[RMDB]
RNA sequence: GGGAACGACUCGAGUAGAGUCGAAAAAUUGAUUGCAAAGUUGUCCUGAGAAUUCACUGAUGGGUAAUCUAAGGGUGUAAGAUCAGAAAUGUUCAUACAUAAACUGGUUUUAUAAUUCAGUAAUUUGUUUUGCAGUGUUUAUAGCUUUGCUGUCAGAACGAUAAUACCUGUUCGCAGGUAUUAUCGUAAAAGAAACAACAACAACAAC
Reactivity to DMS in 0.01 (KOAc 150mM, MgCl2 10mM, bicine 150mM(pH8.5), 24C), signal-to-noise 2, nucleotides 027 to 156: a100u010u000g010a050u000u000g000c010a010a060a120g040u000u000g030u000c040c030u010g000a300g040a090a070u000u010c110a060c000u000g000a080u000g000g020g020u000a010a080u010c070u000a140a130g050g010g010u000g030u000a010a040g020a010u010c020a000g000a070a130a160u000g000u000u000c140a220u010a060c000a010u000a080a110a160c050u000g050g010u010u000u010u000a020u010a070a120u000u000c020a080g000u000a070a050u000u030u000g000u000u000u000u000g020c000a050g030u000g040u010u000u000a120u010a090g010c040u000u020u000g020c000u000g000u000c030a090g000a150
Reactivity to 2A3 in 0.01 (KOAc 150mM, MgCl2 10mM, bicine 150mM(pH8.5), 24C), signal-to-noise 5, nucleotides 027 to 156: a000u080u040g000a010u040u020g000c000a020a010a010g010u040u010g020u070c020c050u090g040a070g040a090a050u110u060c080a020c050u010g010a040u110g090g110g100u120a090a040u090c050u090a080a100g110g000g000u040g000u010a020a010g010a040u010c010a010g030a040a140a020u050g020u100u240c070a060u190a210c000a000u060a030a270a060c020u000g000g010u010u010u050u030a060u040a110a180u030u040c000a010g030u040a100a090u110u120u100g100u040u180u150u230g040c000a000g000u010g030u100u260u080a060u050a010g000c000u020u010u010g020c010u010g000u000c010a000g030a040
Description:
An RNA of 207 nucleotides, treated with DMS and 2A3 and read out base by base. For DMS, 3,193 sequencing reads were counted. It was measured as part of the RMDB library OK3TST. The RNA was probed in 150 mM KOAc, 10 mM MgCl2 and 150 mM bicine (pH 8.5) at 24 C.